Background:
Chemical mapping of a 177-nucleotide RNA with DMS and 2A3. The reactions ran in a buffer of 150 mM KOAc, 10 mM MgCl2 and 150 mM bicine (pH 8.5), at 24 C. The DMS profile rests on 5,203 reads. The data come from the RNA Mapping Database (RMDB), library TTRDEL. DMS adducts were read by reverse transcription with MarathonRT.

[RMDB]
RNA sequence: GGGAACGACUCGAGUAGAGUCGAAAAGAUAUGGAUAUGCACCAACAGCAUGCGUUCGGAAACGAACGUCAUGACAUGGACAUAUCCUAAGUCAAAACGGAUGGGCAUGUUCGCAUGCCCAUCCGAACAAUAAAUGUGGCUUCGGCCACAUUUAUUGAAAAGAAACAACAACAACAAC
Reactivity to DMS in 0.01 (KOAc 150mM, MgCl2 10mM, bicine 150mM(pH8.5), 24C), signal-to-noise 5, nucleotides 027 to 126: g000a030u000a190u010g000g010a010u000a020u000g010c080a160c000c000a050a140c300a170g000c010a010u000g010c000g010u000u000c000g020g000a070a050a090c000g000a010a010c000g010u030c020a000u000g000a080c120a120u000g000g000a300c000a010u000a010u000c000c000u000a010a090g000u000c020a050a080a120a250c020g000g000a010u000g020g000g030c000a010u000g000u000u010c250g010c000a010u000g000c000c000c000a000u000c010c010g000a000a060
Reactivity to 2A3 in 0.01 (KOAc 150mM, MgCl2 10mM, bicine 150mM(pH8.5), 24C), signal-to-noise 3, nucleotides 027 to 126: g020a000u050a000u060g000g010a000u020a010u040g070c250a300c300c000a070a110c100a190g050c000a000u000g010c000g010u000u010c010g000g000a020a030a020c000g010a000a000c010g060u120c010a000u000g100a130c110a150u030g000g010a000c000a000u010a000u040c000c000u000a020a010g020u000c030a020a010a110a150c020g000g000a010u010g000g000g000c010a010u010g040u070u130c300g010c210a000u010g000c020c000c010a000u000c000c000g000a000a000